[RMDB]
RNA sequence: GGGAACGACUCGAGUAGAGUCGAAAAGCGAUGCCGUGAGUAGGGGCGACCGAAAGCGGCACAGCCCAAACCGAACAUCCGGGGGUAACUCCGGAUGGAUGUGGUGUUGUAGGACCCUGCCUAAUGCCUUGCUAAUACCGUUCGCGGUAUUAGCAAGAAAAGAAACAACAACAACAAC
Reactivity to 2A3 in 0.01 (KOAc 150mM, MgCl2 10mM, bicine 150mM(pH8.5), 24C), signal-to-noise 1, nucleotides 027 to 126: g140c010g090a130u050g010c030c000g010u020g000a000g030u010a020g000g060g060g200c150g130a060c000c000g040a010a000a000g010c040g180g000c010a000c000a000g020c000c000c000a110a000a000c000c010g010a000a010c000a000u010c000c000g000g000g000g020g060u080a190a090c000u000c000c000g000g000a030u000g000g010a010u050g210u270g010g030u120g000u070u080g010u000a020g050g030a030c030c000c000u020g020c010c060u120a100a020u120g000c040
Reactivity to DMS in 0.01 (KOAc 150mM, MgCl2 10mM, bicine 150mM(pH8.5), 24C), signal-to-noise 3, nucleotides 027 to 126: g020c030g000a120u010g010c000c000g000u010g010a060g000u000a070g000g000g020g030c270g020a300c000c010g010a170a120a300g010c000g010g000c000a000c040a060g010c000c010c040a030a170a090c040c020g010a180a180c020a000u000c000c010g020g010g000g020g010u060a140a110c000u000c000c000g000g000a000u010g000g010a030u010g040u040g000g000u010g000u010u000g030u000a060g000g000a090c060c020c020u000g010c050c050u020a040a070u010g000c160